The record gives the reactivity of an RNA of 177 nucleotides to DMS. Values cover nucleotides 27 to 126. For DMS the reverse transcriptase was MarathonRT.
RNA sequence: GGGAACGACUCGAGUAGAGUCGAAAAUCUGUUGCCAGUGAUACCAUGUUUUGUUAGGGCAAACAUCCUUUGGGUUAAAAGUAAGAAAUCUUAGGUAGCAGAGAUUUUACUUUUGCUUCCAGCAAACCAAAUUGGGGCUAUUCGUAGCCCCAAUUUGAAAAGAAACAACAACAACAAC
Reactivity to DMS in 0.01 (KOAc 150mM, MgCl2 10mM, bicine 150mM(pH8.5), 24C), signal-to-noise 2, nucleotides 027 to 126: u000c080u000g000u000u000g000c010c050a130g010u000g000a110u010a090c050c020a110u000g010u000u010u000u010g000u000u010a100g010g000g000c030a050a050a110c110a040u010c050c000u030u020u000g000g010g010u000u000a020a030a030a030g010u000a020a030g000a040a030a050u000c010u000u010a060g030g000u000a020g030c100a060g010a020g000a180u000u000u000u000a020c020u000u000u010u000g000c070u010u020c040c080a070g030c100a040a050a090c130